An RNA of 177 nucleotides, treated with DMS and 2A3 and read out base by base. The reactions ran in a buffer of 150 mM KOAc, 10 mM MgCl2 and 150 mM bicine (pH 8.5), at 24 C. It was measured as part of the RMDB library OK1LIB. 2A3 adducts were read by reverse transcription with SuperScript II with manganese. For DMS, 2,883 sequencing reads were counted. As a SHAPE reagent, 2A3 marks flexible, mostly unpaired nucleotides at the ribose 2'-OH.
RNA sequence: GGGAACGACUCGAGUAGAGUCGAAAAAUACUGACGAUUGAUAAUAACAAAUUUGUAUCAUUAGUUUGUAAAUUCACUUGUCUUAAUUUGAAACAAAUUAUAACUGAAUGUGAUUGGUGACAAUCGCCAAGGCGAAGUGAUUCGUCACUUCGCCUUGAAAAGAAACAACAACAACAAC
Reactivity to DMS in 0.01 (KOAc 150mM, MgCl2 10mM, bicine 150mM(pH8.5), 24C), signal-to-noise 2, nucleotides 027 to 126: a040u000a040c060u000g010a010c000g000a010u020u010g040a050u020a090a060u000a140a120c070a060a050a070u010u010u040g020u000a070u010c090a080u000u030a110g020u000u000u000g020u000a060a060a040u010u000c010a080c110u000u030g000u000c030u010u000a040a000u010u000u020g000a140a120a060c090a020a050a030u000u000a050u000a050a040c150u040g000a050a050u010g030u000g020a010u000u050g000g010u020g000a090c010a020a010u000c000g000c020
Reactivity to 2A3 in 0.01 (KOAc 150mM, MgCl2 10mM, bicine 150mM(pH8.5), 24C), signal-to-noise 4, nucleotides 027 to 126: a000u130a020c040u010g040a010c040g040a050u070u010g010a010u020a280a020u080a080a020c060a090a060a040u130u120u120g120u110a100u060c010a040u060u140a080g000u000u030u090g030u020a050a080a090u060u040c010a020c060u030u030g030u010c000u030u100a210a110u100u110u080g110a190a160a000c060a050a080a050u100u140a110u120a180a090c080u050g090a060a080u120g000u000g030a020u000u000g010g040u070g020a040c030a000a040u010c000g000c030